This 177-nucleotide RNA was probed chemically with DMS and 2A3. DMS adducts were read by reverse transcription with MarathonRT. The RNA was probed in 150 mM KOAc, 10 mM MgCl2 and 150 mM bicine (pH 8.5) at 24 C. 2A3 adducts were read by reverse transcription with SuperScript II with manganese.
RNA sequence: GGGAACGACUCGAGUAGAGUCGAAAAGCGCGGGCCGGCUGGGCCACUCCUCGACCGCCGUCCCCACCCCUCUGGUUGGGGCCGCGCCGGCGCGGACUCCUGCAGUCCGGGGCGGCGGGGCUACGCAGACUACGUAUGGAUUCGUCCAUACGUAGUCAAAAGAAACAACAACAACAAC
Reactivity to DMS in 0.01 (KOAc 150mM, MgCl2 10mM, bicine 150mM(pH8.5), 24C), signal-to-noise 2, nucleotides 027 to 126: g020c130g030c110g000g000g010c060c010g010g020c040u010g030g000g010c040c050a050c110u000c080c050u000c060g000a080c030c010g000c020c000g000u000c000c000c000c050a230c030c020c010c080u000c090u020g020g030u000u000g010g010g000g000c010c000g000c020g010c020c010g010g020c030g000c010g000g000a020c000u010c030c160u010g020c110a040g000u000c010c000g000g010g010g000c000g010g010c010g010g000g010g010c000u000a060c070g010c120a120
Reactivity to 2A3 in 0.01 (KOAc 150mM, MgCl2 10mM, bicine 150mM(pH8.5), 24C), signal-to-noise 1, nucleotides 027 to 126: g080c080g000c030g060g020g020c020c020g010g000c070u200g080g040g010c090c030a100c060u060c010c010u040c020g080a060c000c010g010c020c030g000u020c000c000c010c000a060c000c010c010c010u010c040u150g160g010u030u080g000g010g010g000c010c000g070c000g000c000c040g080g050c160g010c020g000g010a020c020u060c060c200u250g040c100a020g000u020c000c010g020g050g000g120c000g010g000c040g000g000g020g020c020u060a070c070g060c040a030